[RMDB]
Chemical mapping of a 177-nucleotide RNA with 2A3 and DMS. The data come from the RNA Mapping Database (RMDB), library M2PK90. Conditions: 150 mM KOAc, 10 mM MgCl2 and 150 mM bicine (pH 8.5), 24 C. Reactivities are given for positions 27 through 126.
RNA sequence: GGGAACGACUCGAGUAGAGUCGAAAAGAAAAUGGUAGCAACGGUUCCAAAGGAGCCGAAGUUCAAAGCUAAGGCAUCGAUCUAAAAUGCUACCAAAAAGGUAACGAGCUUGGCAAAGAACAAAAAACAUUAUCAAAUCGUUCGCGAUUUGAUAAUGAAAAGAAACAACAACAACAAC
Reactivity to 2A3 in 0.01 (KOAc 150mM, MgCl2 10mM, bicine 150mM(pH8.5), 24C), signal-to-noise 1, nucleotides 027 to 126: g080a000a080a040a030u070g000g000u020a020g000c010a020a050c010g020g010u010u000c020c020a240a200a120g040g010a010g030c020c000g030a030a020g010u010u010c030a130a000a040g000c010u010a060a060g080g020c020a160u080c060g040a030u030c010u180a030a090a060a000u070g000c010u000a000c000c030a060a000a000a000a000g050g000u030a040a000c020g000a020g020c040u030u040g030g000c000a030a070a080g050a060a020c000a060a050a020a000a010a010
Reactivity to DMS in 0.01 (KOAc 150mM, MgCl2 10mM, bicine 150mM(pH8.5), 24C), signal-to-noise 3, nucleotides 027 to 126: g010a050a090a100a130u000g000g000u000a010g050c000a140a300c020g000g000u000u000c010c010a110a110a250g010g000a010g000c000c000g030a030a060g010u000u000c020a100a100a130g000c010u010a040a100g010g000c050a050u010c110g000a050u020c050u010a020a050a080a120u010g010c000u000a010c000c000a020a040a030a050a080g010g000u020a030a080c030g010a050g010c000u000u000g000g020c000a060a080a150g000a020a000c040a010a070a100a050a010a080
High DMS reactivity at an A or C suggests that its Watson-Crick edge is free.